[RMDB]
Background:
Structure probing data (DMS) for a 177-nucleotide construct. Reactivities are given for positions 27 through 126. The RNA was probed in 150 mM KOAc, 10 mM MgCl2 and 150 mM bicine (pH 8.5) at 24 C. Reactivities are rounded to 0.1 and cut off at 0 and 3. Source: RMDB library OK2TRN, as collected in RNAgym.
RNA sequence: GGGAACGACUCGAGUAGAGUCGAAAAGUUGGCGCCCUUGUCGCUAAUGAGGGGUGGAAUGCCUCGGAGGACGCUCUUACCGCUGUUAUUACUGCAGCGUAUUUGACCAUUUGCCAUCAGCGUUACCACGAUCCUCCCCUUUCGAGGGGAGGAUCGUAAAAGAAACAACAACAACAAC
Reactivity to DMS in 0.01 (KOAc 150mM, MgCl2 10mM, bicine 150mM(pH8.5), 24C), signal-to-noise 1, nucleotides 027 to 126: g010u000u000g000g030c030g020c020c150c070u000u000g020u010c080g000c090u000a050a050u010g030a080g000g000g000g000u010g010g010a090a060u010g000c000c000u000c030g010g020a200g000g000a080c050g010c030u010c090u010u000a100c290c020g010c010u040g010u010u000a030u000u000a180c230u000g010c010a010g020c020g000u000a060u010u010u000g020a060c090c050a140u000u010u010g010c010c020a230u000c130a080g000c010g010u000u000a060c040c070